Source: RMDB library RNAMAK, as collected in RNAgym. Chemical mapping of a 207-nucleotide RNA with 2A3 and DMS. The reactions ran in a buffer of 150 mM KOAc, 10 mM MgCl2 and 150 mM bicine (pH 8.5), at 24 C.
RNA sequence: GGGAACGACUCGAGUAGAGUCGAAAAGGGACAGAAUUCGUUCUGUCCCAAAAAGCGUACUACGAGGACCAUGUAGCUAGAUAUCCCAAAUAGGAUAUUUAGCGCAGAUAUGGUCUACCCACCGUAUCGCAAAAAACCAACGAUUCGUCGUUGGUAAUAGUGCUCAACUAUUCGUAGUUGAGCACUAAAAAGAAACAACAACAACAAC
Reactivity to 2A3 in 0.01 (KOAc 150mM, MgCl2 10mM, bicine 150mM(pH8.5), 24C), signal-to-noise 3, nucleotides 027 to 156: g010g000g000a010c010a010g010a040a050u080u090c070g020u030u000c020u000g030u020c000c000c000a000a000a000a000a020g010c010g020u040a040c020u000a000c060g010a020g030g040a000c000c000a000u040g020u050a090g000c000u000a010g010a000u010a010u030c040c040c040a130a290a180u300a070g040g000a000u020a000u000u000u010a000g000c000g000c000a010g020a090u170a040u040g020g010u030c000u020a040c010c000c000a030c010c010g010u020a020u150c020g010c060a050a080a000a000a000a110c010c010a000a000c010g010a010u070u110c260g050u000c000g000u180u000g000g000u010a000a000
Reactivity to DMS in 0.01 (KOAc 150mM, MgCl2 10mM, bicine 150mM(pH8.5), 24C), signal-to-noise 2, nucleotides 027 to 156: g010g040g020a020c010a020g000a050a050u000u010c300g000u000u000c000u000g010u000c000c020c000a010a000a000a050a050g000c000g040u000a050c170u000a040c020g000a120g010g010a030c050c000a030u000g030u000a250g020c000u000a000g000a010u000a000u000c000c000c000a080a090a290u010a070g000g010a030u000a000u010u000u000a000g000c030g020c120a060g030a100u000a000u000g000g030u000c020u000a010c010c000c010a300c130c010g010u000a020u000c050g000c020a060a050a060a060a070a090c020c000a010a030c020g000a050u000u000c280g020u000c010g010u000u000g000g010u000a020a060
For 2A3, 3,035 sequencing reads were counted. The DMS profile rests on 3,787 reads. Reactivities are given for positions 27 through 156.